[RMDB]
RNA sequence: GGGAACGACUCGAGUAGAGUCGAAAAGAGAGGGUAACCACCGGCGCGCGUCACUGAUAAAUCCACCGGGGGGUAAGGGGAGAAAAGGAUACAGCGCGACGAAGUUAGCACGCUGCCCCGUAAGGCUUGAAGAGUGUAGUGUUCGCACUACACUCAAACUAGAUCUGUACUUCGGUACAGAUCUAGUAAAAGAAACAACAACAACAAC
Reactivity to 2A3 in 0.01 (KOAc 150mM, MgCl2 10mM, bicine 150mM(pH8.5), 24C), signal-to-noise 2, nucleotides 027 to 156: g110a000g010a040g050g010g020u060a050a050c040c030a010c020c050g020g000c000g000c000g000c020g060u070c030a020c130u070g050a060u100a150a100a030u050c060c020a050c050c030g030g040g000g000g000g010u050a050a050g010g010g030g010a040g070a020a090a000a010g050g010a030u080a110c020a020g000c020g000c000g040a010c000g010a020a020g090u070u090a030g000c060a000c070g020c010u040g030c000c000c000c000g020u040a060a050g050g000c040u080u160g100a170a050g000a050g000u000g000u000a000g000u020g050u040u020c170g020c040a000c000u000a000c000a000c000u020c010a000a000
Reactivity to DMS in 0.01 (KOAc 150mM, MgCl2 10mM, bicine 150mM(pH8.5), 24C), signal-to-noise 1, nucleotides 027 to 156: g010a100g010a140g020g000g000u000a050a080c080c040a070c030c000g000g010c040g000c040g030c010g010u000c080a230c020u020g030a180u010a090a110a140u020c000c060a090c060c020g010g030g000g000g020g010u010a020a140g010g020g020g010a130g030a060a070a080a070g010g040a160u000a080c000a060g020c000g050c010g000a120c000g010a060a100g000u010u000a110g010c050a040c040g020c000u000g020c000c020c010c000g010u000a100a050g010g060c010u000u000g010a140a130g000a070g020u020g000u000a010g020u000g030u000u000c200g010c040a020c000u000a010c000a030c000u010c000a000a100
Structure probing data (2A3 and DMS) for a 207-nucleotide construct. DMS adducts were read by reverse transcription with MarathonRT. For 2A3 the reverse transcriptase was SuperScript II with manganese. The 2A3 profile rests on 1,389 reads. 2A3 is a SHAPE reagent: it acylates the 2'-hydroxyl of flexible nucleotides of all four kinds.